[RMDB]
RNA sequence: GGGAACGACUCGAGUAGAGUCGAAAACUUCUGUUCGCUCCGGAACUUCACUAUCAGGUAGCAAACUAUCGAAUUGUUCACCUAAACGUAUUGCGUUUACCAUUGCAUUUUUAGCUGAACCAGGAUGACAGGUCCCUUGAUUCGUCAAGGGACCUGUAAAAGAAACAACAACAACAAC
Reactivity to 2A3 in 0.01 (KOAc 150mM, MgCl2 10mM, bicine 150mM(pH8.5), 24C), signal-to-noise 2, nucleotides 027 to 126: c010u140u000c000u000g090u020u020c030g050c060u050c050c060g010g050a010a010c000u070u000c070a090c110u060a000u160c060a030g030g010u010a000g020c030a030a030a010c060u050a080u280c010g110a140a150u040u070g010u000u010c030a070c050c000u010a040a040a060c130g060u110a170u030u160g070c080g010u030u020u200a110c080c080a120u010u150g030c020a020u060u080u030u050u010a050g050c040u030g000a000a000c050c000a030g000g120a080u060g010

This 177-nucleotide RNA was probed chemically with 2A3.
It was measured as part of the RMDB library OK1LIB.
For 2A3, 651 sequencing reads were counted.
The reactions ran in a buffer of 150 mM KOAc, 10 mM MgCl2 and 150 mM bicine (pH 8.5), at 24 C.
Values cover nucleotides 27 to 126.